[RMDB]
RNA sequence: GGGAACGACUCGAGUAGAGUCGAAAAUUUCUAUCCUGAAGUUCUGCGCGAGAUCGUCGCGGAGACUGGUAUUGCGCCUGUGUUGAAUCAGGUGGAAUUGCAUCCUGGUUUUUCUCAAGCCGAGCAGACUUGCUUAGAAUUUCGAUUCUAAGCAAGUAAAAGAAACAACAACAACAAC
Reactivity to DMS in 0.01 (KOAc 150mM, MgCl2 10mM, bicine 150mM(pH8.5), 24C), signal-to-noise 8, nucleotides 027 to 126: u010u000u010c040u010a090u010c020c010u000g000a090a060g010u010u000c010u000g010c010g020c020g010a070g010a140u010c150g010u000c010g030c070g010g010a060g010a040c020u000g010g010u000a070u000u000g010c130g010c020c060u000g010u010g010u000u010g010a130a100u000c010a010g010g030u000g010g010a090a070u010u000g010c110a070u010c030c030u010g020g000u000u000u000u000u000c020u000c030a100a080g000c030c040g000a090g010c120a110g010
Reactivity to 2A3 in 0.01 (KOAc 150mM, MgCl2 10mM, bicine 150mM(pH8.5), 24C), signal-to-noise 5, nucleotides 027 to 126: u030u050u010c020u040a110u090c000c010u040g080a080a010g060u160u010c020u090g050c010g010c030g020a040g020a300u210c110g050u030c010g140c020g040g020a010g000a010c030u050g000g050u100a110u080u120g040c070g010c010c010u050g020u020g050u150u160g100a060a030u030c000a000g000g000u020g020g060a080a130u090u110g020c020a050u070c020c030u020g000g050u000u030u020u040u020c020u020c020a020a010g000c010c010g020a010g000c030a020g010
Structure probing data (DMS and 2A3) for a 177-nucleotide construct. For 2A3, 8,310 sequencing reads were counted. Reactivities are given for positions 27 through 126. In probing experiments dimethyl sulfate is read out at A N1 and C N3, which are open when not base-paired. For DMS, 17,370 sequencing reads were counted. Conditions: 150 mM KOAc, 10 mM MgCl2 and 150 mM bicine (pH 8.5), 24 C. For 2A3 the reverse transcriptase was SuperScript II with manganese. Source: RMDB library OK2TST, as collected in RNAgym.